[RMDB]
RNA sequence: GGGAACGACUCGAGUAGAGUCGAAAAAGGUUUGCAUUCCUGGAGGCCGCUGGUGGAGGGGUCUGGGGGCCUGACUUCCACUGCAGCCUGCUGUCCUGGGGAAUGUGGCAGGGCAAGCCCAGUGGGGUCCAUAUGUCGGUUUCGACCGACAUAUGGAAAAAGAAACAACAACAACAAC
Reactivity to 2A3 in 0.01 (KOAc 150mM, MgCl2 10mM, bicine 150mM(pH8.5), 24C), signal-to-noise 1, nucleotides 027 to 126: a000g090g020u080u060u080g050c030a060u040u040c020c010u070g060g030a000g050g020c040c030g000c160u160g050g010u030g030g040a070g000g050g020g020u000c100u150g090g030g000g040g050c000c010u050g070a100c000u140u060c010c000a030c010u060g010c000a000g000c000c020u020g020c000u040g070u100c020c040u060g050g010g000g010a010a040u080g000u110g080g010c020a000g030g050g000c040a030a030g040c030c020c010a040g050u130g000g020g000g030
Reactivity to DMS in 0.01 (KOAc 150mM, MgCl2 10mM, bicine 150mM(pH8.5), 24C), signal-to-noise 2, nucleotides 027 to 126: a080g040g020u000u000u010g010c030a110u010u000c000c040u000g020g000a070g010g010c030c090g020c040u000g050g000u000g010g000a060g000g000g000g010u010c040u020g000g010g010g010g000c060c030u010g010a150c030u010u000c000c010a030c010u010g020c050a080g010c010c000u000g000c050u010g010u010c030c050u010g000g000g000g000a080a050u010g010u000g010g010c030a080g020g010g010c080a060a070g010c040c050c040a110g000u010g010g000g000g020